The record gives the reactivity of an RNA of 177 nucleotides to DMS and 2A3. For 2A3 the reverse transcriptase was SuperScript II with manganese. It was measured as part of the RMDB library OK2TRN. For 2A3, 646 sequencing reads were counted.

[RMDB]
RNA sequence: GGGAACGACUCGAGUAGAGUCGAAAAGUGUCAUGAACCAGUAUUGAGCAUGAGAAUGUAUGCCAAUUUGAGAAGUUUCAAAUUCUUGGAGAGUCUUUUGACAGGCCCUUCACAGACUCAUGGUUAAAUUUCAUCGCAUAUUCGUAUGCGAUGAAAUAAAAGAAACAACAACAACAAC
Reactivity to DMS in 0.01 (KOAc 150mM, MgCl2 10mM, bicine 150mM(pH8.5), 24C), signal-to-noise 2, nucleotides 027 to 126: g020u000g010u000c070a040u000g000a080a160c090c040a120g010u010a130u000u000g010a060g000c020a030u000g020a060g010a060a110u000g000u000a080u000g020c130c110a030a060u000u010u000g000a030g000a150a160g000u020u010u000c080a020a070a040u010u000c050u010u010g040g000a030g000a010g000u000c000u000u000u000u000g010a090c250a060g000g000c000c020c000u000u000c000a060c100a020g000a160c040u000c010a020u000g000g010u000u020a030a060
Reactivity to 2A3 in 0.01 (KOAc 150mM, MgCl2 10mM, bicine 150mM(pH8.5), 24C), signal-to-noise 1, nucleotides 027 to 126: g100u080g110u070c080a100u080g090a070a060c030c030a040g010u010a160u050u160g040a040g000c010a010u030g070a030g090a150a070u090g010u100a000u100g040c030c020a060a020u010u040u040g030a010g030a190a180g080u090u200u050c080a090a080a040u080u010c030u010u050g010g010a040g010a030g020u030c010u020u150u180u300g090a100c070a100g020g030c000c000c000u020u030c040a060c010a060g020a010c000u040c010a030u070g100g030u060u040a080a220